[RMDB]
RNA sequence: GGGAACGACUCGAGUAGAGUCGAAAAGUGGGAGCACUCGUCGCCGGAGAGGUUGCCGUGGUCGACUUGUUGUCGCCGCGGAGGCCGAUCACCAGGAUCACCACCAGUAGGAUGACACCCAGCACCGGCUGUGCUACCAUUUCGAUGGUAGCACAGCAAAAGAAACAACAACAACAAC
Reactivity to 2A3 in 0.01 (KOAc 150mM, MgCl2 10mM, bicine 150mM(pH8.5), 24C), signal-to-noise 1, nucleotides 027 to 126: g080u150g040g060g020a070g010c010a040c080u110c060g090u070c050g040c000c010g010g000a050g030a020g000g000u030u070g080c000c020g000u000g000g020u300c080g000a040c030u160u200g150u300u160g010u110c000g000c010c000g010c020g000g020a000g030g000c000c040g000a040u010c000a030c080c020a030g060g010a020u020c020a000c040c000a000c000c000a050g060u070a020g140g020a090u080g000a030c010a120c040c000c000a000g000c040a030c020c040g090
Reactivity to DMS in 0.01 (KOAc 150mM, MgCl2 10mM, bicine 150mM(pH8.5), 24C), signal-to-noise 1, nucleotides 027 to 126: g000u000g000g000g020a120g010c020a060c060u000c090g020u010c070g010c040c030g010g010a120g000a100g010g000u000u020g010c010c010g020u000g000g020u000c010g040a000c020u000u020g010u010u020g010u000c020g010c020c000g080c030g020g000a040g020g000c020c020g010a220u010c040a060c120c090a120g010g000a140u000c050a090c040c010a040c050c050a130g000u000a060g020g000a070u000g020a120c090a100c030c020c020a130g000c030a080c070c030g000

Notes: Structure probing data (2A3 and DMS) for a 177-nucleotide construct. The 2A3 profile rests on 1,208 reads. Conditions: 150 mM KOAc, 10 mM MgCl2 and 150 mM bicine (pH 8.5), 24 C. Source: RMDB library OK2TRN, as collected in RNAgym. For DMS, 1,048 sequencing reads were counted.